[RMDB]
RNA sequence: GGGAACGACUCGAGUAGAGUCGAAAACUGAUUUUUAUUCUUCUAUUCAAAAUACAAGGACAGAUGCUUCUCUGUUCCAAGAGGGUUUCCUUGAGGAAGCUACUGAAGCAGAAAGACAUGAUGGAGACGAGAUCGCCUCCCCUCUUGUCAAAGUGUAAUACUCAGUGAGUUUCGACUCACUGAGUAUAAAAGAAACAACAACAACAAC
Reactivity to 2A3 in 0.01 (KOAc 150mM, MgCl2 10mM, bicine 150mM(pH8.5), 24C), signal-to-noise 1, nucleotides 027 to 156: c020u030g100a150u050u090u020u140u230a140u110u070c010u120u000c010u060a080u150u060c050a100a170a060a100u170a070c090a070a000g050g010a020c020a060g140a030u060g040c040u030u060c020u000c000u070g070u030u000c040c000a000a010g030a000g050g040g000u100u120u130c000c000u050u060g020a030g060g000a020a000g000c040u130a100c060u030g020a020a000g010c010a000g020a010a020a020g010a010c050a070u090g000a050u020g010g000a040g010a040c010g050a010g050a200u180c050g040c020c030u040c000c010c000c000u030c010u000u040g020u000c010a030a000a030g070u060g000u060a030
Reactivity to DMS in 0.01 (KOAc 150mM, MgCl2 10mM, bicine 150mM(pH8.5), 24C), signal-to-noise 1, nucleotides 027 to 156: c040u010g000a020u000u010u000u000u040a140u010u050c030u000u000c030u010a000u000u000c020a080a060a070a150u010a100c060a100a050g000g020a110c050a100g000a100u000g010c010u000u000c030u000c000u010g010u010u000c010c010a030a300g020a040g030g020g010u000u010u000c010c010u010u020g000a300g010g010a010a010g020c070u010a080c090u000g010a010a020g000c010a000g000a070a010a080g010a040c000a060u000g030a130u010g020g030a050g060a020c030g000a300g000a180u010c000g020c000c030u000c000c010c010c100u000c060u000u010g000u000c010a040a050a160g010u000g050u020a110